[RMDB]
RNA sequence: GGGAACGACUCGAGUAGAGUCGAAAAAGCGGUCCUCAGUGCUCUUACUCUUUUCUGUAAAGAGGAGACUGCUGGACUCGUCGCCCCAGUCCGAGGUGAGCCUUGUGCCGACCGAAGGGUGCGAUGGCAGCAUAUAAUGGUUCGCCAUUAUAUGCUGAAAAGAAACAACAACAACAAC
Reactivity to DMS in 0.01 (KOAc 150mM, MgCl2 10mM, bicine 150mM(pH8.5), 24C), signal-to-noise 6, nucleotides 027 to 126: a090g010c070g010g010u000c010c010u000c010a010g010u010g010c100u010c010u010u010a300c030u000c010u000u000u000u010c270u010g020u000a010a010a020g020a010g010g000a010g010a030c010u000g020c160u000g000g010a020c010u010c020g010u000c020g010c020c000c000c040a140g010u000c050c040g010a260g000g000u000g010a090g000c010c030u010u010g020u010g020c020c030g000a080c020c030g000a140a150g000g000g010u000g010c050g010a070u000g020g020
Reactivity to 2A3 in 0.01 (KOAc 150mM, MgCl2 10mM, bicine 150mM(pH8.5), 24C), signal-to-noise 6, nucleotides 027 to 126: a000g070c040g020g010u010c010c000u010c010a030g020u130g160c020u030c020u090u210a270c000u010c010u080u080u090u060c170u280g300u300a030a010a010g000a010g010g000a000g010a000c000u010g020c060u010g000g000a020c020u020c070g020u030c030g020c000c010c000c000a020g120u000c010c040g050a030g010g020u040g050a040g010c010c040u160u200g140u280g040c020c010g080a070c000c010g050a090a080g020g000g030u120g020c010g040a050u090g100g060